Record summary: Conditions: 150 mM KOAc, 10 mM MgCl2 and 150 mM bicine (pH 8.5), 24 C. Structure probing data (2A3 and DMS) for a 207-nucleotide construct. The data come from the RNA Mapping Database (RMDB), library RNAMAK. For DMS the reverse transcriptase was MarathonRT.
RNA sequence: GGGAACGACUCGAGUAGAGUCGAAAACUGGGUUCGCCCAGCUGUCUGAUAUGGAUAUGAACUACUUCGUGCCGCUUCGAAGAACGACUUUCGGAAACGAAAGUCGGGAGAAGUUCAUCGAAGCAUAUCCUAAGUCCAACUGUGUUUUCGAACACAAAUAAUUUCGAUCAUUCGUGAUCGAAAUUAUAAAAGAAACAACAACAACAAC
Reactivity to 2A3 in 0.01 (KOAc 150mM, MgCl2 10mM, bicine 150mM(pH8.5), 24C), signal-to-noise 4, nucleotides 027 to 156: c010u010g000g000g060u050u080c230g120c020c010c010a010g030c060u080g110u050c080u100g060a070u040a060u230g010g010a000u010a010u020g030a090a080c060u160a050c000u300u000c000g010u020g050c050c060g020c030u000u010c000g200a300a040g000a070a000c020g000a000c000u000u000u000c010g020g040a080a050a050c000g000a010a000a000g000u000c000g000g000g000a020g000a000a000g010u070u090c110a040u070c060g000a000a000g000c000a000u000a000u000c000c000u010a030a000g010u000c030c030a080a080c130u060g010u010g040u020u020u070u110c200g090a040a010c040a000c000a110a090
Reactivity to DMS in 0.01 (KOAc 150mM, MgCl2 10mM, bicine 150mM(pH8.5), 24C), signal-to-noise 2, nucleotides 027 to 156: c000u000g030g000g060u000u000c270g000c020c010c000a050g030c000u030g020u000c050u000g010a160u000a170u010g040g000a040u050a090u010g000a140a260c040u000a140c000u000u000c000g010u000g010c300c180g040c010u020u000c000g010a200a200g000a140a300c000g000a030c000u000u000u010c000g040g000a170a090a300c010g010a000a000a030g010u000c000g000g000g030a210g000a020a020g020u000u000c080a120u010c010g010a030a050g000c000a040u000a050u000c020c050u000a080a200g000u000c000c010a000a170c090u010g000u010g000u000u000u010u000c200g000a020a040c040a020c030a020a150